RNA sequence: GGGAACGACUCGAGUAGAGUCGAAAAACGUUCGUUCACACACGUUCGUGAACUCACACACGAACACGAGAUCGAUCACACGUGAACUCACGAGAGAGAGUGUUCGUGAUCGAACUCACGAGUGAGUUCACUCGUUCUCUCGAGAGAACACUCACACCAAUCUAGCUAGGUUCGCCUAGCUAGAUUGAAAAGAAACAACAACAACAAC
Reactivity to 2A3 in 0.01 (KOAc 150mM, MgCl2 10mM, bicine 150mM(pH8.5), 24C), signal-to-noise 9, nucleotides 027 to 156: a000c050g000u040u040c030g020u100u100c120a070c010a010c000a010c170g020u040u040c030g000u010g030a030a010c020u050c020a030c000a010c000a020c050g090a190a040c060a040c190g020a020g000a050u010c010g010a010u030c020a010c010a010c090g050u040g130a110a040c010u010c040a060c160g100a120g000a010g000a000g000a000g120u030g040u080u080c030g000u010g000a010u040c020g010a020a040c010u000c030a020c060g030a030g010u010g020a010g010u020u020c010a010c020u010c010g020u030u000c000u000c000u030c020g050a050g000a000g000a050a010c010a010c030u060c020a060c010a030c100
Reactivity to DMS in 0.01 (KOAc 150mM, MgCl2 10mM, bicine 150mM(pH8.5), 24C), signal-to-noise 3, nucleotides 027 to 156: a040c080g020u000u000c070g020u010u000c030a070c070a180c160a070c100g020u000u000c070g000u000g000a010a060c050u000c020a080c070a180c040a170c050g000a080a090c050a120c050g010a070g030a080u000c030g010a040u010c030a040c020a140c100g040u000g000a070a140c020u000c030a090c120g020a210g020a150g010a140g010a110g000u000g000u000u010c040g020u020g000a020u000c010g020a030a110c050u000c000a130c070g030a160g020u010g000a050g010u000u000c010a020c020u000c030g020u000u000c020u000c010u000c060g000a100g000a090g020a000a060c020a060c040u010c000a100c030a180c110
An RNA of 207 nucleotides, treated with 2A3 and DMS and read out base by base. Values cover nucleotides 27 to 156. For DMS the reverse transcriptase was MarathonRT.